Source: RMDB library OK1LIB, as collected in RNAgym. Chemical mapping of a 177-nucleotide RNA with DMS and 2A3. The reactions ran in a buffer of 150 mM KOAc, 10 mM MgCl2 and 150 mM bicine (pH 8.5), at 24 C.
[RMDB]
RNA sequence: GGGAACGACUCGAGUAGAGUCGAAAAAGGCUAGUUCGAUGUUGACGGCUUUCGGCAUCGACCGCGGUUGCGUGGAGCGUUGCGUCCACAGCGAUCGUGGACGGUUCUGGAGAGAGCAGCUCCAUACGCGGGUUUCUUCGUUCGCGAGGGAACCCGCAAAAGAAACAACAACAACAAC
Reactivity to DMS in 0.01 (KOAc 150mM, MgCl2 10mM, bicine 150mM(pH8.5), 24C), signal-to-noise 3, nucleotides 027 to 126: a100g020g000c010u000a050g010u000u010c020g010a040u020g010u000u000g000a100c110g000g000c070u000u010u000c010g000g000c050a000u010c030g000a080c030c020g020c030g010g020u000u000g000c030g000u000g000g000a040g000c020g010u020u000g020c030g010u000c000c010a000c000a090g040c040g000a030u000c020g010u000g000g000a070c060g000g000u010u000c020u000g000g020a100g010a080g000a070g010c100a150g000c020u000c000c040a050u040a070c150
Reactivity to 2A3 in 0.01 (KOAc 150mM, MgCl2 10mM, bicine 150mM(pH8.5), 24C), signal-to-noise 5, nucleotides 027 to 126: a000g090g000c040u050a040g040u040u040c030g020a050u030g020u090u090g060a080c030g090g010c000u050u090u090c010g010g000c010a010u000c010g010a030c000c000g000c030g000g030u020u030g000c010g000u010g010g000a020g030c190g090u140u230g050c050g180u050c000c000a010c020a040g020c030g030a030u040c030g000u000g010g000a010c000g020g020u030u050c020u070g090g000a050g010a000g000a010g050c020a020g020c010u010c020c000a050u040a100c080